[RMDB]
RNA sequence: GGGAACGACUCGAGUAGAGUCGAAAACUAGUAAAAUAAAAUCUAGGCACAUUUUAUUUUAGUGCACCGUAUAUCAUCGGUACGGUGGACAUGCGAAAGCAUGUCCAUCGUACUGAUGAUAUACGGAGCACGAACUACGGUUCGCCGUAGUUCGUGCAAAAGAAACAACAACAACAAC
Reactivity to 2A3 in 0.01 (KOAc 150mM, MgCl2 10mM, bicine 150mM(pH8.5), 24C), signal-to-noise 2, nucleotides 027 to 126: c000u020a030g180u110a070a050a050a180u060a010a090a050a030u070c070u130a170g270g030c090a010c010a100u050u100u070u070a100u000u110u070u090a200g050u130g060c030a020c030c000g000u000a000u000a000u000c000a000u000c000g000g020u000a000c000g040g000u000g000g000a000c010a020u010g000c000g040a150a030a000g010c010a000u000g000u000c000c000a000u000c000g000u000a000c000u000g000a000u010g000a000u000a000u010a000c020g000g010a000
Reactivity to DMS in 0.01 (KOAc 150mM, MgCl2 10mM, bicine 150mM(pH8.5), 24C), signal-to-noise 2, nucleotides 027 to 126: c030u000a080g010u000a010a010a020a030u010a020a010a050a020u000c050u000a120g020g010c130a100c170a070u000u000u000u010a010u000u000u000u000a050g010u000g020c090a130c000c000g000u010a010u010a010u000c000a000u000c000g000g000u000a000c000g030g020u000g000g000a010c010a000u000g010c000g000a130a090a210g020c000a010u000g010u000c010c000a000u000c000g000u000a000c000u000g000a000u000g000a010u000a000u000a000c010g000g010a050